RNA sequence: GGGAACGACUCGAGUAGAGUCGAAAAGAUAUGGAUUAACGGGAGGGGUAGUUGAUAGAACUACAGCGCGGUUUCGGAAACGAAAUACGCUGCUAUCAACUACCCCUUUGAUCGUUAAUCCUAAGUCCUGUUUAGCUUAGUUCGCUAAGCUAAACAGAAAAGAAACAACAACAACAAC
Reactivity to DMS in 0.01 (KOAc 150mM, MgCl2 10mM, bicine 150mM(pH8.5), 24C), signal-to-noise 3, nucleotides 027 to 126: g000a130u000a300u000g000g010a020u010u000a000a000c000g010g010g010a000g000g000g000g020u000a010g010u000u000g010a000u000a000g000a100a040c110u000a300c000a010g000c010g020c040g020g010u000u000u010c000g010g000a140a100a250c000g000a010a000a010u000a080c000g010c000u000g000c000u000a000u000c000a000a000c010u000a000c000c000c000c000u000u000u010g000a060u020c000g010u000u000a010a000u000c000c000u000a020a120g010u000c030